An RNA of 177 nucleotides, treated with DMS and read out base by base.
The RNA was probed in 150 mM KOAc, 10 mM MgCl2 and 150 mM bicine (pH 8.5) at 24 C.
The data come from the RNA Mapping Database (RMDB), library TTRDEL.

RNA sequence: GGGAACGACUCGAGUAGAGUCGAAAAGAUAUGGACAAGUGGACAUGAACCUUCUCGGAAACGAGAAGUUCAACAGCCAUGUCCUAAGUCAAACAGAGCAGAACAAGUUCGCUUGUUCUGCUCUGAACAGAAGUCUCUUCUUCGGAAGAGACUUCUGAAAAGAAACAACAACAACAAC
Reactivity to DMS in 0.01 (KOAc 150mM, MgCl2 10mM, bicine 150mM(pH8.5), 24C), signal-to-noise 2, nucleotides 027 to 126: g020a080u000a270u000g000g000a000c000a100a120g010u000g020g000a010c120a230u000g010a080a020c150c030u000u010c000u000c000g000g000a110a050a240c000g010a000g000a020a030g000u000u010c050a000a030c210a150g000c060c020a050u000g000u000c000c000u000a020a150g020u000c020a050a120a240c010a010g000a020g000c000a000g000a010a020c000a000a010g000u000u010c230g010c020u020u000g000u000u000c000u000g000c000u000c000u000g010a070a170
For DMS, 1,002 sequencing reads were counted.